[RMDB]
RNA sequence: GGGAACGACUCGAGUAGAGUCGAAAAAGCGCAACGUAUACGUCGACGAUACAACAAGAACGGUUCAUCGGAGCCUCGACUAAAGACGCUUGACGGACUCACUUCCGAGCGCUGGAUUCAAUGGUUAAGUGAGGUGCUGAUUCGUCAGCACCUCACUAAAAGAAACAACAACAACAAC
Reactivity to DMS in 0.01 (KOAc 150mM, MgCl2 10mM, bicine 150mM(pH8.5), 24C), signal-to-noise 2, nucleotides 027 to 126: a050g030c020g000c110a050a070c220g050u000a040u000a020c170g000u000c000g010a140c020g000a100u020a110c060a080a210c240a260a190g030a000a120c180g010g000u000u000c000a050u010c130g100g000a050g060c180c120u000c090g020a100c040u140a000a110a130g000a000c040g040c010u000u000g000a090c300g020g010a020c070u000c000a160c210u000u000c000c020g000a030g000c020g010c090u000g000g000a110u000u000c050a060a080u000g000g000u070u000a110
Reactivity to 2A3 in 0.01 (KOAc 150mM, MgCl2 10mM, bicine 150mM(pH8.5), 24C), signal-to-noise 2, nucleotides 027 to 126: a000g190c150g000c080a040a040c020g070u180a130u010a110c000g010u110c040g040a100c070g060a000u050a180c060a130a000c010a190a050g000a070a070c060g040g020u140u070c040a080u090c200g080g000a050g000c000c000u070c000g130a040c170u060a030a030a030g080a050c030g020c040u040u000g000a040c030g030g000a000c000u000c000a060c030u140u000c110c030g000a000g010c000g070c000u100g000g000a010u120u000c000a100a040u300g020g010u160u100a080
The record gives the reactivity of an RNA of 177 nucleotides to DMS and 2A3.
It was measured as part of the RMDB library OK1LIB.
For DMS the reverse transcriptase was MarathonRT.
The 2A3 profile rests on 462 reads.
Conditions: 150 mM KOAc, 10 mM MgCl2 and 150 mM bicine (pH 8.5), 24 C.
For DMS, 1,086 sequencing reads were counted.
Reactivities are rounded to 0.1 and cut off at 0 and 3.